Record summary
Structure probing data (DMS and 2A3) for a 177-nucleotide construct. The reactions ran in a buffer of 150 mM KOAc, 10 mM MgCl2 and 150 mM bicine (pH 8.5), at 24 C. Reactivities are given for positions 27 through 126. DMS adducts were read by reverse transcription with MarathonRT. The DMS profile rests on 1,831 reads. For 2A3 the reverse transcriptase was SuperScript II with manganese.

RNA sequence: GGGAACGACUCGAGUAGAGUCGAAAAGUGAUUGGACUGCGGGACCAUUCGGCGCUGACAGUGACCGUUGCGGACCCCGAAGGGCUGGUCGCCGCGCUCAGCAGCUAGUUCGCCGAGCGCCCCGUGCCGUAGUCGGUCAUUUCGAUGACCGACUACGAAAAGAAACAACAACAACAAC
Reactivity to DMS in 0.01 (KOAc 150mM, MgCl2 10mM, bicine 150mM(pH8.5), 24C), signal-to-noise 2, nucleotides 027 to 126: g000u010g000a040u000u000g000g020a210c010u010g000c030g000g040g040a150c010c020a160u000u000c040g010g000c020g000c020u020g000a150c170a100g020u010g010a120c030c030g040u000u000g000c090g020g000a130c070c010c000c020g010a070a070g020g010g030c040u010g020g010u000c030g000c010c080g030c030g000c050u000c010a060g000c030a140g010c220u000a090g000u000u010c140g030c000c020g000a030g000c060g000c000c020c010c020g000u010g000c130
Reactivity to 2A3 in 0.01 (KOAc 150mM, MgCl2 10mM, bicine 150mM(pH8.5), 24C), signal-to-noise 1, nucleotides 027 to 126: g020u020g020a030u010u090g060g020a000c000u030g000c020g000g000g050a060c010c010a020u010u090c030g030g010c020g040c040u100g130a100c060a090g000u000g050a300c030c010g000u020u040g150c230g020g000a160c000c020c040c010g070a040a060g040g080g130c040u010g060g000u000c000g000c040c010g020c000g000c010u000c000a050g010c000a000g040c040u200a080g190u130u210c030g040c020c000g010a000g010c010g000c000c000c000c000g020u050g060c020